An RNA of 177 nucleotides, treated with 2A3 and DMS and read out base by base. DMS adducts were read by reverse transcription with MarathonRT. The RNA was probed in 150 mM KOAc, 10 mM MgCl2 and 150 mM bicine (pH 8.5) at 24 C. It was measured as part of the RMDB library TTRDES. For DMS, 1,661 sequencing reads were counted. Values are in units of 0.01, from 0 to 300, in steps of 10.
[RMDB]
RNA sequence: GGGAACGACUCGAGUAGAGUCGAAAAGAUAUGGAAUUUACAGACAUGAGAUCCAGUCGGAAACGACUGUGAUCUCAACAGCUGUGGGAUUCCUAAGUCAAAGACGAUGUCCUUCGGGACAUCGUCACCAAAAAAGUAGCUUCGGCUACUUUUUUGGAAAAGAAACAACAACAACAAC
Reactivity to 2A3 in 0.01 (KOAc 150mM, MgCl2 10mM, bicine 150mM(pH8.5), 24C), signal-to-noise 1, nucleotides 027 to 126: g000a000u040a010u080g000g030a040a000u090u050u050a040c000a000g070a030c220a290u300g000a010g010a000u000c000c020a000g000u040c000g000g000a050a000a020c000g030a020c000u040g000u000g000a000u000c000u000c000a020a000c000a010g000c000u010g000u050g080g000g070a020u030u010c010c010u000a020a000g010u000c040a300a030a030g030a020c010g010a000u000g040u000c050c000u120u060c300g110g000g000a010c000a000u000c000g000u000c010a000
Reactivity to DMS in 0.01 (KOAc 150mM, MgCl2 10mM, bicine 150mM(pH8.5), 24C), signal-to-noise 1, nucleotides 027 to 126: g010a000u000a030u010g000g000a010a000u000u000u000a000c000a000g000a020c050a300u010g000a010g010a010u000c000c000a020g000u000c000g000g000a000a000a040c010g010a010c000u000g000u010g020a010u000c000u000c000a040a030c280a110g010c000u000g000u000g020g030g000a000u000u010c000c000u010a020a160g010u000c000a070a130a220g000a010c000g010a020u000g010u000c000c010u000u010c270g040g000g020a010c010a000u000c000g000u000c000a020